[RMDB]
RNA sequence: GGGAACGACUCGAGUAGAGUCGAAAAGCAGCACUUGAAGCGUUCAAUGUGGCGGUGCGCAAGAUACGCGAGGUAGAGGAAUGCCACAUGAUCGCCAGCUCCUUCGACUAUCUCCUGAAAGUGCGCACUCCUGAUCAGUCUUCGGACUGAUCAGGAGAAAAGAAACAACAACAACAAC
Reactivity to 2A3 in 0.01 (KOAc 150mM, MgCl2 10mM, bicine 150mM(pH8.5), 24C), signal-to-noise 1, nucleotides 027 to 126: g000c120a000g000c010a050c080u070u070g090a070a010g000c000g020u000u020c080a210a240u030g010u000g000g010c010g060g030u100g000c010g000c000a050a070g100a070u170a080c080g000c040g080a060g220g000u100a050g040a000g090g150a120a030u160g010c000c000a000c000a000u010g010a010u010c020g010c000c000a000g020c020u040c000c020u110u080c030g010a010c020u080a100u050c050u020c020c000u000g040a060a000a030g020u060g010c010g030c000a020
Reactivity to DMS in 0.01 (KOAc 150mM, MgCl2 10mM, bicine 150mM(pH8.5), 24C), signal-to-noise 1, nucleotides 027 to 126: g040c070a080g060c070a130c070u010u000g010a150a300g030c000g030u020u020c030a060a060u000g030u000g000g040c010g060g040u000g010c000g050c030a070a100g000a130u000a040c060g030c030g030a080g010g000u000a090g020a150g010g000a030a100u020g000c000c000a020c020a000u000g030a000u000c010g030c010c040a040g010c010u010c080c060u010u000c060g020a060c070u000a080u010c040u010c010c020u010g000a090a040a080g040u000g040c040g020c050a220